[RMDB]
RNA sequence: GGGAACGACUCGAGUAGAGUCGAAAAUAUAUUUCGUUUUUCCGUGGCACACCCGUUCUCGUGCAACUGCUCAUCAUCUAUUUCGGCCUGCCUCAACUCUUCCCGGCUGCACUUGGCAUUUCGCCCGAUCAGCAUAUGAGUUCGCUCAUAUGCUGAUAAAAGAAACAACAACAACAAC
Reactivity to 2A3 in 0.01 (KOAc 150mM, MgCl2 10mM, bicine 150mM(pH8.5), 24C), signal-to-noise 7, nucleotides 027 to 126: u160a000u050a060u020u120u090c070g020u040u020u000u020u050c040c030g010u070g040g000c010a040c020a050c060c010c010g030u080u030c030u010c030g060u070g030c030a100a060c050u040g020c020u000c030a130u010c010a060u010c050u120a200u060u080u060c020g030g000c010c000u030g010c000c000u030c020a020a030c010u010c010u050u030c010c010c000g020g000c010u020g020c000a020c050u040u040g020g010c030a110u040u060u080c060g010c000c010c010g020
Reactivity to DMS in 0.01 (KOAc 150mM, MgCl2 10mM, bicine 150mM(pH8.5), 24C), signal-to-noise 4, nucleotides 027 to 126: u040a060u030a070u020u020u000c070g000u000u000u010u010u000c010c020g020u010g000g020c070a090c090a090c080c010c040g030u020u010c010u000c050g030u030g010c070a060a070c110u000g000c010u040c050a070u010c080a050u000c060u000a090u020u000u010c030g010g000c040c010u010g020c030c040u000c030a060a080c100u000c050u000u000c010c010c020g020g030c030u000g000c030a050c060u020u010g000g010c060a130u010u000u010c040g010c010c030c080g010